[RMDB]
This 177-nucleotide RNA was probed chemically with DMS and 2A3.

RNA sequence: GGGAACGACUCGAGUAGAGUCGAAAAUAAAAAGUGCAAGAUCGAAAAAGGCUAAAACAAUGAACAACGAUCGCACAAAAAGAAAACAUUGAAAUAGCCAAAACCGACGAAAAAGUGCGGAUAAAAAACAUAAUAGUGCUUUCGAGCACUAUUAUGUAAAAGAAACAACAACAACAAC
Reactivity to DMS in 0.01 (KOAc 150mM, MgCl2 10mM, bicine 150mM(pH8.5), 24C), signal-to-noise 1, nucleotides 027 to 126: u000a100a090a100a060a120g000u000g010c030a140a120g020a010u020c000g020a130a050a060a080a120g000g000c010u000a010a000a080a070c040a050a010u000g000a080a070c130a050a090c040g020a000u000c000g000c010a040c050a010a070a070a070a030g010a040a100a160a180c050a000u010u010g000a040a070a040u010a010g000c000c010a080a090a170a030c020c000g000a000c010g050a100a010a070a160a070g050u010g000c040g030g030a100u020a000a010a040a060a070
Reactivity to 2A3 in 0.01 (KOAc 150mM, MgCl2 10mM, bicine 150mM(pH8.5), 24C), signal-to-noise 1, nucleotides 027 to 126: u130a020a080a010a000a000g000u000g000c000a230a010g000a020u040c010g080a030a000a000a160a080g000g030c020u040a040a020a030a010c050a010a050u070g020a060a040c020a030a010c080g000a010u000c020g020c080a020c010a000a210a010a020a000g120a040a070a010a010c000a000u000u010g020a110a110a050u050a000g000c000c000a000a000a020a090c000c000g050a040c010g100a180a280a110a000a000g100u110g050c000g000g040a010u180a020a080a010a000a010
For 2A3, 1,245 sequencing reads were counted. It was measured as part of the RMDB library M2PK90.